[RMDB]
RNA sequence: GGGAACGACUCGAGUAGAGUCGAAAAGAUAUGGAGUUUGCUGAUUAGCUAUGAAUGGCAUCGAUCGUCAGGGUUCGGAAACGAACCUGACGGGAGCCACAUAGCUAAUCAGCAAACUCCUAAGUCAGACUGUAAUACAGUUCGCUGUAUUACAGUCAAAAGAAACAACAACAACAAC
Reactivity to DMS in 0.01 (KOAc 150mM, MgCl2 10mM, bicine 150mM(pH8.5), 24C), signal-to-noise 2, nucleotides 027 to 126: g010a030u010a300u000g010g000a020g000u000u000u000g020c020u000g000a020u000u000a000g010c010u000a000u010g010a150a130u010g000g000c020a300u010c210g000a090u010c000g010u000c000a010g020g010g000u020u000c000g000g000a130a120a240c000g000a010a040c000c000u010g000a000c010g010g000g000a060g040c020c000a030c010a000u000a010g010c000u000a000a000u000c000a000g010c020a000a000a000c010u000c000c000u000a000a050g010u000c060a130